[RMDB]
RNA sequence: GGGAACGACUCGAGUAGAGUCGAAAAUGGUGGGAUUGUGGCAUUAAUUUGCCUGCUCAUCUAGGCAGUGGACAUAUGCUCAACACUGGGUAUAAUUCUAAUUGAAUACUAUUUUUCAGUUAGAGCGAGGGACAUCGGUUCGCCGAUGUCAAAAGAAACAACAACAACAAC
Reactivity to 2A3 in 0.01 (KOAc 150mM, MgCl2 10mM, bicine 150mM(pH8.5), 24C), signal-to-noise 8, nucleotides 027 to 129: u130g000g000u020g000g000g030a060u160u170g110u080g080g000c010a020u030u040a090a040u080u120u030g010c010c000u000g010c010u010c000a040u000c010u000a010g060g000c020a030g010u040g030g020a010c010a050u130a030u140g010c040u000c020a030a090c060a030c090u030g010g000g040u100a030u000a110a100u060u000c000u010a010a030u030u020g010a010a020u060a130c110u080a240u210u180u020u020u010c000a000g000u000u000a010g000a010g000c030g050a120g060g070
Reactivity to DMS in 0.01 (KOAc 150mM, MgCl2 10mM, bicine 150mM(pH8.5), 24C), signal-to-noise 4, nucleotides 027 to 129: u020g030g040u020g000g000g000a000u060u050g070u040g000g000c010a020u000u000a050a100u020u000u000g020c010c000u000g000c040u030c030a040u000c000u020a080g000g000c000a050g000u040g020g040a000c100a140u040a010u010g020c020u020c030a050a060c150a000c140u000g000g000g000u030a040u000a040a060u000u000c010u000a030a040u000u050g000a040a000u050a090c270u040a050u020u000u000u000u000c000a040g020u020u040a070g000a040g030c030g020a130g020g010

This 170-nucleotide RNA was probed chemically with 2A3 and DMS. 2A3 adducts were read by reverse transcription with SuperScript II with manganese. The RNA was probed in 150 mM KOAc, 10 mM MgCl2 and 150 mM bicine (pH 8.5) at 24 C. Values cover nucleotides 27 to 129.